RNA sequence: GGGAACGACUCGAGUAGAGUCGAAAACAGUCACUGGCUGCUGAGAGUCCUUUCACGGAGUGUCAGGGAGGUGAAGAUGAAGAUAUCUAAAAAUGUUUGCUUUUGUAGCAGAUGUUAAUGCGCGUUCCUGUUUGUAAGCAUGAAGGGCGCAAGCCUGCCCUCUACUUGAGUUCGCUCAAGUAGAGGGAAAAGAAACAACAACAACAAC
Reactivity to DMS in 0.01 (KOAc 150mM, MgCl2 10mM, bicine 150mM(pH8.5), 24C), signal-to-noise 2, nucleotides 027 to 156: c030a090g000u000c030a120c050u000g010g030c050u010g040c040u000g000a190g000a110g000u000c030c020u010u010u010c070a130c120g020g000a100g050u020g010u000c040a160g020g020g010a140g020g030u010g000a140a090g000a050u000g000a110a070g000a070u010a030u000c070u000a000a070a060a060a020u010g020u000u000u000g000c000u000u000u000u000g010u000a050g000c050a020g000a040u000g020u010u000a040a060u000g020c010g010c050g020u000u000c010c010u000g010u000u000u020g040u000a070a130g000c050a100u000g010a070a140g000g090g020c020g000c110a040a110g040c000c030u000g000
Reactivity to 2A3 in 0.01 (KOAc 150mM, MgCl2 10mM, bicine 150mM(pH8.5), 24C), signal-to-noise 3, nucleotides 027 to 156: c020a000g040u060c040a010c120u100g080g030c020u120g000c070u070g080a050g000a000g120u030c020c000u070u240u110c120a110c170g040g020a050g030u140g040u020c040a050g020g000g040a010g010g010u050g020a100a040g010a090u060g010a060a060g040a100u080a150u070c120u250a090a080a070a010a010u080g010u000u050u060g050c020u090u120u150u200g180u200a010g030c000a000g000a040u020g060u010u090a080a060u100g010c050g010c010g050u020u070c000c010u050g080u090u030u100g140u130a100a000g060c020a030u070g050a060a060g040g010g000c000g000c030a030a000g000c000c000u020g010
The data come from the RNA Mapping Database (RMDB), library OK3TST. The record gives the reactivity of an RNA of 207 nucleotides to DMS and 2A3. Values are in units of 0.01, from 0 to 300, in steps of 10. 2A3 adducts were read by reverse transcription with SuperScript II with manganese.